[RMDB]
RNA sequence: GGGAACGACUCGAGUAGAGUCGAAAAGAAGGAGAUGAAAGCGACUUUAGAAUCGGCUAACUGAGCAGCCAGAUACAGACGGCAAGUAUCGUCGCCAGAGAUACAGUCGCAAAUAGCCGAAGGAGAACACGAGCUAUGGAUUCGUCCAUAGCUCGUGAAAAGAAACAACAACAACAAC
Reactivity to DMS in 0.01 (KOAc 150mM, MgCl2 10mM, bicine 150mM(pH8.5), 24C), signal-to-noise 3, nucleotides 027 to 126: g000a150a080g010g000a050g020a090u060g000a050a050a100g010c000g010a040c000u000u020u000a070g000a130a140u000c010g000g030c000u010a050a040c030u020g000a050g010c050a070g010c060c020a140g010a070u040a030c190a070g010a180c110g010g010c040a110a090g030u010a020u010c030g030u000c080g050c020c060a120g000a080g000a090u000a040c020a170g000u070c010g000c050a000a120a060u000a030g010c000c010g000a050a090g000g010a070g000a160a210